[RMDB]
RNA sequence: GGGAACGACUCGAGUAGAGUCGAAAAGGAAAGUAAAGAAAGCAACGGGGCUAGUCGGUGGGUGUUCCGCCCCCCGAGAGGGCACGAGUGAGGCUUAUCCCGGGGAACUCGACUUAUCGUCCCCACACUAUACGUAUCAGUUCGCUGAUACGUAUAGAAAAGAAACAACAACAACAAC
Reactivity to 2A3 in 0.01 (KOAc 150mM, MgCl2 10mM, bicine 150mM(pH8.5), 24C), signal-to-noise 5, nucleotides 027 to 126: g040g020a090a040a050g050u190a110a090a100g070a070a150a030g050c030a040a060c090g040g070g020g000c030u030a020g070u020c020g000g030u030g020g020g010u050g080u210u030c050c030g040c010c010c000c000c000c000g010a010g030a020g020g020g000c040a020c090g050a100g110u180g070a150g080g000c010u050u070a180u250c020c010c000g000g020g010g020a030a020c030u010c050g020a010c000u060u080a070u110c040g050u030c000c000c010c000a010c010a000
Reactivity to DMS in 0.01 (KOAc 150mM, MgCl2 10mM, bicine 150mM(pH8.5), 24C), signal-to-noise 5, nucleotides 027 to 126: g010g000a070a050a070g000u010a040a120a100g000a090a100a100g010c090a080a100c100g010g010g000g010c090u000a050g000u000c030g010g020u000g010g000g020u000g000u010u000c070c050g010c030c010c010c010c000c000g000a020g000a040g010g010g000c010a020c050g000a180g010u020g010a120g000g000c010u000u000a130u000c000c010c000g000g010g010g010a110a050c070u000c010g000a030c060u000u000a100u000c070g000u010c000c000c000c030a090c190a120
An RNA of 177 nucleotides, treated with 2A3 and DMS and read out base by base. As a SHAPE reagent, 2A3 marks flexible, mostly unpaired nucleotides at the ribose 2'-OH. Reactivities are rounded to 0.1 and cut off at 0 and 3. DMS adducts were read by reverse transcription with MarathonRT. Conditions: 150 mM KOAc, 10 mM MgCl2 and 150 mM bicine (pH 8.5), 24 C. For DMS, 5,998 sequencing reads were counted.